[RMDB]
Structure probing data (DMS and 2A3) for a 177-nucleotide construct. For 2A3 the reverse transcriptase was SuperScript II with manganese. The data come from the RNA Mapping Database (RMDB), library OK2TST. Conditions: 150 mM KOAc, 10 mM MgCl2 and 150 mM bicine (pH 8.5), 24 C. The 2A3 profile rests on 38,314 reads.
RNA sequence: GGGAACGACUCGAGUAGAGUCGAAAAAGUUCGGCCGCAAGGAAGUCGGCGACCGCCAGCUGUUUGGCAUCCUCGGCCGCGGCAAGUCGCAGAUCGCCUACGCCAAGGUGGCGCUGAACAUCGUCAACACUAAUAUCAGUUUCGACUGAUAUUAGUGAAAAGAAACAACAACAACAAC
Reactivity to DMS in 0.01 (KOAc 150mM, MgCl2 10mM, bicine 150mM(pH8.5), 24C), signal-to-noise 9, nucleotides 027 to 126: a080g010u000u000c010g020g010c010c020g020c050a090a280g020g010a060a070g030u000c090g010g010c010g010a020c030c030g020c040c060a190g010c020u000g000u000u010u020g040g020c010a100u010c110c100u010c130g010g010c000c010g010c030g000g010c010a090a070g010u010c140g020c050a100g010a070u000c070g010c010c000u000a090c090g000c030c020a060a190g010g010u000g010g020c040g010c020u000g000a030a030c020a110u000c070g000u010c080a090a160
Reactivity to 2A3 in 0.01 (KOAc 150mM, MgCl2 10mM, bicine 150mM(pH8.5), 24C), signal-to-noise 9, nucleotides 027 to 126: a000g020u010u010c010g020g000c010c000g000c030a040a050g030g040a150a140g030u020c020g010g000c000g000a020c010c020g010c010c010a030g000c010u040g060u150u300u220g060g000c020a080u180c020c100u090c100g070g000c000c010g000c000g000g000c040a090a040g050u110c050g010c060a030g020a180u020c010g000c010c000u010a010c020g010c020c010a030a030g220g000u040g020g030c140g040c120u120g010a010a000c010a050u110c040g190u070c050a060a050